Chemical mapping of a 177-nucleotide RNA with DMS and 2A3. The RNA was probed in 150 mM KOAc, 10 mM MgCl2 and 150 mM bicine (pH 8.5) at 24 C. The 2A3 profile rests on 2,225 reads.
RNA sequence: GGGAACGACUCGAGUAGAGUCGAAAAGGAAAUGACAGAGUAGCUGAGUACUCGGCGCACGACGUAUAGGGCAGCAGUUAGAGUCGGGAAAUCCAUGCCUUGGUCCCGCAACAAGGCUGCAACACCCCUGAUGGUAUGCAUUCGUGCAUACCAUCAGAAAAGAAACAACAACAACAAC
Reactivity to DMS in 0.01 (KOAc 150mM, MgCl2 10mM, bicine 150mM(pH8.5), 24C), signal-to-noise 3, nucleotides 027 to 126: g010g010a060a110a080u000g020a080c080a090g020a240g010u000a140g000c050u000g010a110g010u000a070c070u000c010g010g020c050g020c100a060c050g020a190c100g000u010a080u010a090g000g000g000c050a070g010c010a070g020u000u020a090g010a130g010u010c010g010g000g010a040a120a080u000c020c040a060u020g000c090c130u010u000g000g010u010c010c010c000g050c080a060a050c110a060a050g010g010c010u020g000c050a040a070c120a120c040c000c040
Reactivity to 2A3 in 0.01 (KOAc 150mM, MgCl2 10mM, bicine 150mM(pH8.5), 24C), signal-to-noise 2, nucleotides 027 to 126: g030g010a020a000a080u180g040a080c030a050g030a020g040u030a020g020c050u050g050a020g070u090a090c050u050c030g000g000c000g000c010a030c020g070a040c020g000u070a070u110a150g010g040g000c030a030g000c030a010g030u070u070a070g010a030g090u170c000g000g000g010a050a160a040u020c020c000a010u080g150c000c060u020u020g000g030u010c000c000c010g010c010a000a030c040a010a080g110g000c000u000g000c000a020a000c070a100c040c000c000